Record summary: Chemical mapping of a 207-nucleotide RNA with DMS and 2A3. Source: RMDB library OK3TST, as collected in RNAgym. High DMS reactivity at an A or C suggests that its Watson-Crick edge is free. The reactions ran in a buffer of 150 mM KOAc, 10 mM MgCl2 and 150 mM bicine (pH 8.5), at 24 C. 2A3 adducts were read by reverse transcription with SuperScript II with manganese. Reactivities are given for positions 27 through 156.
RNA sequence: GGGAACGACUCGAGUAGAGUCGAAAAUAAUGUAGUGGCACAGAGACUGCAGUACUACUUAGCUAAGUAUUACUCAAAGAACUAUACUAUAACUAACAGUGGGGAUAACGUUUAUUAUUACGUCAUUGCUGAUAUUAACCACGCUUUGGCUAAUGCGCUUACGCGUUAUGUUCGCAUAACGCGUAAGAAAAGAAACAACAACAACAAC
Reactivity to DMS in 0.01 (KOAc 150mM, MgCl2 10mM, bicine 150mM(pH8.5), 24C), signal-to-noise 1, nucleotides 027 to 156: u000a090a090u010g010u000a040g060u000g020g000c030a050c100a100g000a150g000a170c040u000g020c050a090g030u000a070c010u000a040c060u000u000a140g020c050u000a060a030g050u000a030u000u000a000c020u000c050a080a120a150g030a080a110c050u000a030u020a020c030u000a060u020a090a080c040u010a020a050c080a090g060u000g050g020g010g020a120u000a020a040c050g080u010u000u000a050u020u000a120u000u010a070c000g040u010c030a040u000u000g000c000u000g020a110u010a050u000u000a010a050c080c000a010c200g050c160u000u000u000g020g030c030u000a030a020u010g000c100g040
Reactivity to 2A3 in 0.01 (KOAc 150mM, MgCl2 10mM, bicine 150mM(pH8.5), 24C), signal-to-noise 3, nucleotides 027 to 156: u180a000a050u070g010u050a000g000u020g040g000c030a010c020a050g060a030g050a100c030u030g020c050a000g040u040a020c010u010a000c000u080u060a050g030c070u140a080a030g020u010a020u050u040a060c020u000c100a050a090a030g020a080a020c010u020a020u050a100c040u080a050u040a260a050c040u030a050a030c010a050g020u040g010g010g000g020a020u030a110a020c050g020u050u030u010a110u060u000a050u050u070a010c020g000u020c030a010u030u090g000c020u020g040a040u060a070u240u140a090a000c020c010a060c030g020c000u000u010u010g000g000c000u030a000a070u140g010c020g010